[RMDB]
RNA sequence: GGGAACGACUCGAGUAGAGUCGAAAAUGUCAGGUGCUGGAAACGUGCGUAGCAACAGUAGGCCGAGUAUCCAACGUUGAUCAUAACAAACGGGUCAUUGGCAAGGCAGGUCGCAACCGCUGGCUGGGGACGAUCUGUAUUUCGAUACAGAUCGUCCAAAAGAAACAACAACAACAAC
Reactivity to DMS in 0.01 (KOAc 150mM, MgCl2 10mM, bicine 150mM(pH8.5), 24C), signal-to-noise 2, nucleotides 027 to 126: u000g000u000c020a060g000g010u000g040c030u050g020g000a070a070a100c090g000u060g030c080g020u000a080g030c020a060a050c120a150g000u020a100g000g020c030c020g010a150g030u000a000u020c000c020a070a190c220g000u000u000g000a040u000c110a100u020a090a130c110a060a070a090c200g000g000g040u000c010a080u010u000g020g000c120a070a120g040g000c010a040g010g040u000c060g000c130a070a070c050c000g010c060u040g000g000c070u000g000g020
Reactivity to 2A3 in 0.01 (KOAc 150mM, MgCl2 10mM, bicine 150mM(pH8.5), 24C), signal-to-noise 1, nucleotides 027 to 126: u140g050u010c010a010g070g030u020g000c070u050g070g000a110a060a020c050g040u040g010c020g150u130a020g000c010a000a100c000a060g060u090a020g090g000c030c000g030a010g000u040a100u000c010c000a000a050c040g010u010u070g040a170u050c050a030u100a170a070c060a040a050a020c050g030g020g030u020c020a090u040u070g040g000c010a020a020g010g000c030a010g080g000u020c020g050c050a070a070c040c030g000c060u070g010g000c020u080g050g000
Conditions: 150 mM KOAc, 10 mM MgCl2 and 150 mM bicine (pH 8.5), 24 C. Chemical mapping of a 177-nucleotide RNA with DMS and 2A3. For DMS, 1,079 sequencing reads were counted. DMS adducts were read by reverse transcription with MarathonRT. The 2A3 profile rests on 1,268 reads.